[RMDB]
Structure probing data (DMS and 2A3) for a 177-nucleotide construct.
For DMS, 2,404 sequencing reads were counted.
It was measured as part of the RMDB library OK2TST.

RNA sequence: GGGAACGACUCGAGUAGAGUCGAAAAAUGGCUUUUGCCGCUGUGAGUGAGUCGGUGCCAUUGAGUUGCUGGUUAAUGUUCCUCGCCAAUAUUCUCUGGGCGGUGGCUUACGACACGCAGUAUGCGAGAUAUAGGGCACGUUCGCGUGCCCUAUAUCAAAAGAAACAACAACAACAAC
Reactivity to DMS in 0.01 (KOAc 150mM, MgCl2 10mM, bicine 150mM(pH8.5), 24C), signal-to-noise 2, nucleotides 027 to 126: a070u010g020g010c020u010u000u010u000g040c030c060g010c030u000g010u000g000a250g010u000g000a020g000u000c020g020g000u010g000c010c010a070u000u000g000a030g020u000u000g010c200u000g000g000u000u010a130a150u020g010u000u000c020c030u010c300g000c020c010a020a060u000a100u000u000c020u000c010u000g000g020g010c000g000g000u010g020g000c040u000u000a010c040g010a110c120a100c100g010c030a030g020u000a060u000g000c080g010a100
Reactivity to 2A3 in 0.01 (KOAc 150mM, MgCl2 10mM, bicine 150mM(pH8.5), 24C), signal-to-noise 1, nucleotides 027 to 126: a020u040g030g000c000u080u220u140u300g040c030c000g030c080u060g030u020g010a080g000u000g000a000g000u040c020g050g300u050g000c000c050a100u010u060g000a020g020u010u030g050c060u040g000g000u040u130a190a090u260g040u000u080c020c000u060c000g000c000c010a060a010u080a100u300u000c040u010c010u040g120g000g000c010g120g300u020g010g030c000u010u010a010c010g040a000c020a010c110g000c010a050g010u000a060u140g100c040g000a090